[RMDB]
RNA sequence: GGGAACGACUCGAGUAGAGUCGAAAACAGCCAGAGAUGCAUUUGGCCCCAGAAUGUGUCUGAAAUGCUGCUUGGCAUCUGAGAAUGACUUAGAAGUGCCUUUCCAGCAGUCCAGCGUGGGAUGAGAUCCAUACCGGGAGUUCGCUCCCGGUAUGGAAAAAGAAACAACAACAACAAC
Reactivity to 2A3 in 0.01 (KOAc 150mM, MgCl2 10mM, bicine 150mM(pH8.5), 24C), signal-to-noise 3, nucleotides 027 to 126: c010a000g060c020c000a010g020a000g010a070u050g010c000a000u000u010u060g020g030c020c000c000c000a010g000a010a000u020g050u000g020u030c000u070g050a130a070a020u120g010c020u010g010c040u010u060g000g000c010a050u040c020u050g010a010g070a170a300u300g110a220c020u010u070a040g010a170a130g150u040g070c020c000u000u040u040c010c010a000g040c060a010g030u080c050c020a020g050c090g050u130g040g000g000a050u060g080a040g010a080
Reactivity to DMS in 0.01 (KOAc 150mM, MgCl2 10mM, bicine 150mM(pH8.5), 24C), signal-to-noise 3, nucleotides 027 to 126: c060a090g020c030c050a060g020a090g020a010u000g000c000a030u000u000u000g000g010c000c000c000c030a190g010a070a020u000g020u030g000u000c000u000g000a070a130a130u010g000c020u000g010c160u010u000g000g040c000a040u010c020u000g040a000g000a300a160u040g010a080c020u000u000a000g020a080a070g020u030g010c000c000u000u010u030c110c000a090g010c080a060g000u000c030c080a150g000c110g000u020g030g010g000a080u020g020a160g020a150

Conditions: 150 mM KOAc, 10 mM MgCl2 and 150 mM bicine (pH 8.5), 24 C. The record gives the reactivity of an RNA of 177 nucleotides to 2A3 and DMS. Reactivities are rounded to 0.1 and cut off at 0 and 3. For DMS, 3,794 sequencing reads were counted. For 2A3, 1,743 sequencing reads were counted. It was measured as part of the RMDB library OK1LIB.